[RMDB]
RNA sequence: GGGAACGACUCGAGUAGAGUCGAAAAGAUAUGGAUCAGGUGGAGAGAGCAACAGCAUAGCUCGGAAACGAGCUAUGACAUGCUUGGUCACUGAUCCUAAGUCAAAGCCAUCUCUUCGGAGAUGGCAGGGUAUUAGACGGUUCGCCGUCUAAUACCCAAAAGAAACAACAACAACAAC
Reactivity to DMS in 0.01 (KOAc 150mM, MgCl2 10mM, bicine 150mM(pH8.5), 24C), signal-to-noise 2, nucleotides 027 to 126: g000a040u000a300u000g010g030a000u000c010a040g000g000u000g040g000a050g010a300g010a040g010c020a030a080c300a160g000c000a030u000a010g000c000u000c000g040g000a080a100a230c010g010a020g010c000u000a000u000g000a030c110a220u000g050c040u000u010g000g000u000c000a090c000u000g000a020u000c010c010u000a020a110g030u020c050a060a100a080g000c000c000a010u000c010u000c000u020u020c190g010g000a020g000a010u000g000g010c000a000
Reactivity to 2A3 in 0.01 (KOAc 150mM, MgCl2 10mM, bicine 150mM(pH8.5), 24C), signal-to-noise 3, nucleotides 027 to 126: g040a030u090a010u160g010g000a010u010c010a030g300g300u250g210g100a250g010a020g010a010g100c030a040a170c050a150g100c000a020u010a000g000c000u000c000g000g010a000a010a010c010g000a000g000c000u000a010u010g070a040c010a010u070g020c010u050u040g000g060u100c000a000c020u000g010a010u010c000c010u030a160a010g030u020c050a120a080a000g000c000c000a000u000c010u000c000u000u110c300g220g000a000g000a000u000g000g000c020a000